[RMDB]
RNA sequence: GGGAACGACUCGAGUAGAGUCGAAAAUAGGAGAGACGCAGAUGCAAGUGAUCAGUCUCAGUCCCAGACAUUGCCUUGCUCUGCGGGUAGGAAUUCAGGAUUCAUUUUCCAGGGAAGUUCCUGACCUCUGAAUGAGAGGGGCUGUGUAAGGCCAAUGUACAUUAGAUUCGUUCGCGAAUCUAAUGUAAAAAGAAACAACAACAACAAC
Reactivity to 2A3 in 0.01 (KOAc 150mM, MgCl2 10mM, bicine 150mM(pH8.5), 24C), signal-to-noise 5, nucleotides 027 to 156: u180a030g060g010a040g010a010g020a050c020g030c060a020g020a060u140g030c030a040a040g060u070g160a150u160c080a030g010u000c000u000c030a010g080u030c010c010c000a000g000a000c010a040u110u260g040c010c010u000u000g000c000u000c000u000g000c000g030g000g010u070a030g000g030a050a050u060u050c020a020g020g040a030u060u060c030a060u110u170u140u050c040c040a020g040g060g030a040a040g050u040u020c000c000u010g040a060c010c000u000c010u050g130a200a130u200g000a040g010a000g050g020g010g000c020u030g020u010g050u090a050a070g030g010c020c030a010a040u130g020
Reactivity to DMS in 0.01 (KOAc 150mM, MgCl2 10mM, bicine 150mM(pH8.5), 24C), signal-to-noise 3, nucleotides 027 to 156: u000a100g010g000a130g010a080g030a080c040g010c050a050g000a080u010g030c030a090a050g020u010g000a200u000c040a260g000u010c010u010c030a080g000u000c060c030c050a270g000a050c020a090u010u000g000c040c010u010u000g030c010u000c020u010g020c040g000g000g010u000a040g040g000a040a060u000u000c050a140g010g010a120u000u000c120a140u000u020u010u000c030c030a190g030g000g000a070a150g020u000u000c000c010u000g010a070c000c010u000c020u000g010a080a100u010g000a110g010a070g020g020g010g030c010u000g000u000g010u000a090a100g020g010c020c030a070a140u000g000
Chemical mapping of a 207-nucleotide RNA with 2A3 and DMS. For 2A3, 3,407 sequencing reads were counted. It was measured as part of the RMDB library OK3TST. 2A3 adducts were read by reverse transcription with SuperScript II with manganese.